[RMDB]
RNA sequence: GGGAACGACUCGAGUAGAGUCGAAAAGAUAUGGAACGGGUCGCCUAUUGAGGUCGGAAACGACUCCCCACCAAUAUGCGAUGAAGCGUUCCUAAGUCAAACAUGGUUCGGUUCGCCGAACCAUGAACGCUAAGUCAUAGUUCGCUAUGACUUAGCGAAAAGAAACAACAACAACAAC
Reactivity to 2A3 in 0.01 (KOAc 150mM, MgCl2 10mM, bicine 150mM(pH8.5), 24C), signal-to-noise 2, nucleotides 027 to 126: g020a020u110a040u120g020g010a010a000c000g110g180g070u000c000g000c020c000u000a010u010u020g020a010g000g040u010c020g000g100a060a100a050c020g030a020c030u050c050c030c010c010a010c010c010a020a000u010a010u040g020c000g010a020u080g250a200a040g230c020g010u040u000c010c020u020a120a040g070u050c040a030a100a070c000a030u010g030g000u010u000c010g000g040u050u110c260g040c100c000g000a010a000c000c000a000u000g000a030a010
Reactivity to DMS in 0.01 (KOAc 150mM, MgCl2 10mM, bicine 150mM(pH8.5), 24C), signal-to-noise 3, nucleotides 027 to 126: g010a050u020a300u000g000g000a000a020c020g000g010g010u000c000g010c000c060u000a020u000u000g000a100g010g010u000c000g020g000a110a090a200c020g000a020c000u000c040c000c000c030a300c090c000a000a020u000a010u000g000c000g000a020u000g060a110a150g000c010g020u000u000c000c020u000a030a090g000u000c050a140a090a300c020a010u000g000g010u000u010c000g010g010u000u000c230g020c000c000g000a000a000c000c020a000u000g000a070a110
Overview:
Source: RMDB library TTRDEL, as collected in RNAgym. The record gives the reactivity of an RNA of 177 nucleotides to 2A3 and DMS. The 2A3 profile rests on 4,663 reads. 2A3 adducts were read by reverse transcription with SuperScript II with manganese.